[RMDB]
RNA sequence: GGGAACGACUCGAGUAGAGUCGAAAAGGGGGCCCUGGUCCUCCCGCAACACUAGUUCGUGAACCUGGUCAGAUCCGGAAGGAAGCAGCCACAGCGGAUGAUGUGUGUGCCGGGAUGUGGCUGGGGUCUCCAAAACAAGAAUGCUUCGGCAUUCUUGCCCUUCCUUUCGGUUCGCCGAAAGGAAGGGAAAAGAAACAACAACAACAAC
Reactivity to 2A3 in 0.01 (KOAc 150mM, MgCl2 10mM, bicine 150mM(pH8.5), 24C), signal-to-noise 1, nucleotides 027 to 156: g000g010g000g000g000c000c000c000u000g000g010u010c000c010u000c020c000c000g020c010a000a000c000a000c000u000a010g000u020u010c010g020u030g140a180a150c010c080u060g020g070u200c010a000g010a020u000c020c000g030g120a050a080g040g000a000a000g000c010a000g010c010c000a010c000a040g000c010g010g010a010u020g000a110u150g000u000g020u040g080u090g020c130c020g010g000g010a000u020g080u200g000g000c000u000g000g000g000g000u000c000u000c000c000a000a000a000a010c000a000a010g000a000a000u000g000c020u070u110c270g160g000c000a000u000u010c010u030u000g010

Record summary: The record gives the reactivity of an RNA of 207 nucleotides to 2A3. For 2A3, 1,195 sequencing reads were counted. It was measured as part of the RMDB library ARCHII.